[RMDB]
RNA sequence: GGGAACGACUCGAGUAGAGUCGAAAAAUUCGCCGAGAAGCCUCUGUUCGAAACCAUCGGGAGUGAUCCAGAUGACGGUCCUGCCAUGAGACCGCAACGAGAGCAUGUCGCAUCGAAUGGACUCGGGUAUACUAGGUGACGUUCGCGUCACCUAGAAAGUAUAGUGGUGUUUCGACACCACUAUACUAAAAGAAACAACAACAACAAC
Reactivity to DMS in 0.01 (KOAc 150mM, MgCl2 10mM, bicine 150mM(pH8.5), 24C), signal-to-noise 3, nucleotides 027 to 156: a160u010u000c030g020c030c020g020a120g010a090a070g010c030c040u000c020u010g030u010u010c030g000a070a060a110c090c020a050u010c000g030g020g020a160g010u010g010a260u000c000c020a070g010a060u000g000a120c010g000g010u000c000c010u000g010c070c300a120u000g010a010g010a010c010c040g000c020a050a050c050g000a170g000a160g010c070a150u000g030u010c040g020c060a210u000c030g010a070a170u010g000g000a070c050u000c000g020g010g010u000a090u000a120c000u000a010g000g020u000g020a020c000g050u000u000c300g020c010g010u000c000a010c000c010u000a000g010a010a050
Reactivity to 2A3 in 0.01 (KOAc 150mM, MgCl2 10mM, bicine 150mM(pH8.5), 24C), signal-to-noise 5, nucleotides 027 to 156: a010u100u050c060g030c040c000g010a020g050a100a060g060c020c020u030c040u040g030u010u030c020g020a100a060a070c040c000a040u060c050g030g000g000a050g050u130g030a080u030c030c030a050g040a080u070g060a090c010g000g000u010c010c020u080g160c080c020a100u100g010a020g010a170c020c000g010c040a030a070c070g060a010g000a020g130c040a050u180g080u080c060g000c060a050u040c020g030a030a030u040g020g000a000c000u000c020g050g020g000u060a080u020a140c000u000a000g000g000u010g010a000c010g030u030u040c160g020c010g110u010c000a000c000c000u000a000g000a000a000